[RMDB]
RNA sequence: GGGAACGACUCGAGUAGAGUCGAAAAUAAAAGGACAACGAAAUGCGCCUCUGCAACCUCCAGCUGGUGUUGUCUGGGAACCUGAUCAAAACUACCGAGUAUGAUCAGGCCAAUGCAGAGAAAAAAACCAUAGGUGAAGUUUCGACUUCACCUAUGGAAAAGAAACAACAACAACAAC
Reactivity to DMS in 0.01 (KOAc 150mM, MgCl2 10mM, bicine 150mM(pH8.5), 24C), signal-to-noise 2, nucleotides 027 to 126: u000a070a030a090a050g000g000a040c030a030a030c030g010a060a110a090u000g020c160g010c150c000u000c010u000g000c030a020a090c050c060u010c030c040a070g010c100u000g000g020u000g000u000u010g010u000c050u000g000g000g000a220a240c000c000u010g000a030u000c000a010a110a070a040c040u000a200c300c170g000a040g030u000a230u000g000a000u000c010a010g000g000c040c060a030a060u010g010c000a040g010a050g040a030a000a040a050a060a070a140
Reactivity to 2A3 in 0.01 (KOAc 150mM, MgCl2 10mM, bicine 150mM(pH8.5), 24C), signal-to-noise 1, nucleotides 027 to 126: u110a000a030a010a010g050g010a020c010a040a000c020g070a010a100a110u100g070c050g040c010c020u000c000u010g010c000a020a100c000c000u040c000c000a010g040c030u090g010g110u050g050u110u030g000u020c000u000g010g020g000a040a060c000c010u020g000a000u010c000a020a040a150a090c040u120a220c070c120g060a020g040u010a030u090g010a000u000c010a000g000g020c040c010a000a010u040g000c010a010g040a020g010a240a030a010a010a000a000a030
Structure probing data (DMS and 2A3) for a 177-nucleotide construct. Source: RMDB library M2PK90, as collected in RNAgym. The reactions ran in a buffer of 150 mM KOAc, 10 mM MgCl2 and 150 mM bicine (pH 8.5), at 24 C. The DMS profile rests on 1,442 reads.